[RMDB]
RNA sequence: GGGAACGACUCGAGUAGAGUCGAAAAGAAUUUCGGCAGAAGUCACGCUGGAAAAUGGAUUAUAUAAUGGAAGAUCAAUACAAGAAAGUAGAAAACAUAAAUGAAAAUUAAGCUAUUUUCAUACAUCAGAUCGUACGUUUUUCGAAACGUACGAUCUAAAAGAAACAACAACAACAAC
Reactivity to 2A3 in 0.01 (KOAc 150mM, MgCl2 10mM, bicine 150mM(pH8.5), 24C), signal-to-noise 2, nucleotides 027 to 126: g100a000a120u060u000u000c030g040g070c040a030g090a190a000g150u100c140a060c300g020c000u130g000g020a000a000a000a130u040g000g000a060u160u000a020u180a000u040a100a300u180g060g000a090a000g000a090u060c000a070a030u180a240c060a120a080g050a200a050a000g080u010a000g050a070a270a000a060c040a000u300a260a190a140u070g110a000a050a000a000u000u010a240a070g000c000u020a000u000u020u000u000c000a010u000a060c000a000u080c010
Reactivity to DMS in 0.01 (KOAc 150mM, MgCl2 10mM, bicine 150mM(pH8.5), 24C), signal-to-noise 1, nucleotides 027 to 126: g000a190a150u030u000u000c000g090g030c000a000g000a140a020g000u060c040a080c190g000c040u000g000g040a010a000a010a030u030g000g010a100u000u000a130u030a000u070a150a040u000g000g000a010a050g000a030u000c000a050a140u100a060c120a150a040g000a140a010a090g000u000a040g000a000a070a080a260c260a040u010a050a070a030u000g010a030a000a000a040u030u000a050a030g060c130u000a090u000u000u150u010c000a000u010a160c160a090u060c070

Conditions: 150 mM KOAc, 10 mM MgCl2 and 150 mM bicine (pH 8.5), 24 C. An RNA of 177 nucleotides, treated with 2A3 and DMS and read out base by base. Source: RMDB library OK1LIB, as collected in RNAgym.